[RMDB]
RNA sequence: GGGAACGACUCGAGUAGAGUCGAAAAGUGUAUAGGCAAUCCGACCCUCCGCCUAUACACGAAUUAAGGAGGGAGGAGAUCUUAUGCUCGCGAUCUUACGUCACGAGCGAGGGCCUGCGGCUCGUGACGAAUCUUACGCAGGCCAUAGCGAGCUACAACUAUCGAGCAUGUUCGCAUGCUCGAUAGUAAAAGAAACAACAACAACAAC
Reactivity to 2A3 in 0.01 (KOAc 150mM, MgCl2 10mM, bicine 150mM(pH8.5), 24C), signal-to-noise 1, nucleotides 027 to 156: g000u010g010u000a020u000a000g000g040c070a140a160u140c140c020g080a180c080c000c000u030c040c010g020c000c000u000a000u000a000c000a000c000g010a030a000u200u160a060a060g040g010a000g000g050g000a030g040g030a070g010a060u040c010u050u060a040u210g020c000u000c000g010c010g060a040u040c030u080u170a010c000g010u000c000a010c000g000a000g000c030g020a060g000g000g020c000c000u000g000c000g020g020c010u000c010g010u020g000a000c000g020a000a060u040c010u040u150a000c060g000c000a000g000g000c000c000a000u000a000g020c000g040a000g000c030u010a030c100a090